[RMDB]
This 177-nucleotide RNA was probed chemically with 2A3 and DMS. DMS adducts were read by reverse transcription with MarathonRT. It was measured as part of the RMDB library M2PK90.

RNA sequence: GGGAACGACUCGAGUAGAGUCGAAAAAAAAAGGAGGAUGAGAAAUAUAGACAGAGAUCGGUCCUCCCACGCGCGUCUCUCUCUGAUAAGAGGGAUAAGAGGAUGAUUAAUAGAUAGCGCGCAAAAACCUAACAUAAAGCUUCGGCUUUAUGUUAGGAAAAGAAACAACAACAACAAC
Reactivity to 2A3 in 0.01 (KOAc 150mM, MgCl2 10mM, bicine 150mM(pH8.5), 24C), signal-to-noise 1, nucleotides 027 to 126: a000a000a000a000a000g000g040a030g010g010a010u090g060a000g020a120a160a030u250a120u100a160g130a040c000a060g170a020g000a150u040c040g000g030u010c000c000u000c000c000c020a010c040g010c000g000c010g030u000c000u000c000u000c000u000c010u000g100a130u120a220a050g040a030g000g030g010a040u080a030a010g080a050g100g020a020u100g000a010u160u290a160a120u070a080g040a010u080a040g030c000g000c000g000c000a010a010a010a010a010
Reactivity to DMS in 0.01 (KOAc 150mM, MgCl2 10mM, bicine 150mM(pH8.5), 24C), signal-to-noise 1, nucleotides 027 to 126: a070a120a040a120a150g010g000a000g010g040a020u000g000a200g010a060a080a090u010a190u000a170g000a090c270a080g030a090g000a020u000c000g010g030u000c000c000u000c000c000c070a040c060g050c000g010c010g020u000c030u000c000u020c000u000c050u030g040a080u000a180a010g010a000g050g000g000a000u000a110a050g010a040g000g060a060u000g020a170u000u000a190a070u010a180g010a060u010a070g040c010g040c000g050c140a040a020a030a090a030